Source: RMDB library TTRINS, as collected in RNAgym.
Chemical mapping of a 177-nucleotide RNA with DMS.
The DMS profile rests on 1,522 reads.
For DMS the reverse transcriptase was MarathonRT.
[RMDB]
RNA sequence: GGGAACGACUCGAGUAGAGUCGAAAAGAUAUGGAGUCAUCGAGUAAUGUUCUGGGACAUGAUCUAAGGAUCGGAAACGAUCCGAAGAUCAACAGCCCAGAACAUUACUCGAGUGACUCCUAAGUCACACUGUACCUUACUUCGGUAAGGUACAGUGAAAAGAAACAACAACAACAAC
Reactivity to DMS in 0.01 (KOAc 150mM, MgCl2 10mM, bicine 150mM(pH8.5), 24C), signal-to-noise 2, nucleotides 027 to 126: g020a050u010a300u000g000g000a000g040u000c010a080u000c000g000a040g010u000a010a010u000g010u020u000c000u010g000g020g000a090c080a190u010g030a000u000c000u020a020a300g010g000a000u000c020g010g030a130a070a250c000g030a030u000c000c000g020a190a020g000a020u000c010a000a040c270a180g000c000c000c000a000g010a000a000c000a020u000u000a000c000u000c010g010a000g010u000g020a020c010u010c000c000u000a000a010g020u000c060a300